[RMDB]
RNA sequence: GGGAACGACUCGAGUAGAGUCGAAAAGGGCUUGACGCAUCGCCCGAAUAGGAUGCAUGUGCUUUUGCACUAAGAUAAAUGUCCGUAUUGUAGGGGACCUAGAACCUACUCAUUAAUGUCCGAAGAGUCUGGGACGAUCAUCAGGCUAGACUAAGAAACUACGGUACGUAUUCGUACGUACCGUAGUAAAAGAAACAACAACAACAAC
Reactivity to DMS in 0.01 (KOAc 150mM, MgCl2 10mM, bicine 150mM(pH8.5), 24C), signal-to-noise 3, nucleotides 027 to 156: g010g010g020c010u000u000g030a070c060g050c070a020u000c020g000c000c010c010g000a140a110u000a110g030g000a040u010g010c050a140u000g060u000g020c010u000u000u000u010g020c000a040c030u000a100a070g010a080u000a050a050a050u000g010u000c040c070g040u010a150u010u000g010u000a090g030g010g000g000a150c140c110u000a140g010a160a120c030c020u000a020c010u010c040a140u000u010a050a150u020g000u000c010c040g000a160a110g010a140g010u000c000u010g010g030g000a140c020g010a050u000c060a070u020c020a030g000g020c020u000a070g020a100c030u000a090a160g000a150a100
Reactivity to 2A3 in 0.01 (KOAc 150mM, MgCl2 10mM, bicine 150mM(pH8.5), 24C), signal-to-noise 4, nucleotides 027 to 156: g070g010g000c030u040u040g030a020c060g030c020a010u000c020g010c030c000c040g010a010a030u080a030g030g000a020u020g040c050a100u100g020u000g010c040u090u160u180u290g010c000a000c010u030a090a030g030a130u110a080a150a050u140g030u040c030c020g040u090a110u050u100g020u000a010g010g010g020g010a020c020c050u060a070g050a020a000c000c010u020a030c010u030c030a030u040u170a110a040u170g030u040c010c030g020a100a040g020a040g100u000c050u140g000g030g020a120c030g030a050u020c020a010u030c010a000g000g030c000u010a030g030a060c050u100a090a020g050a070a110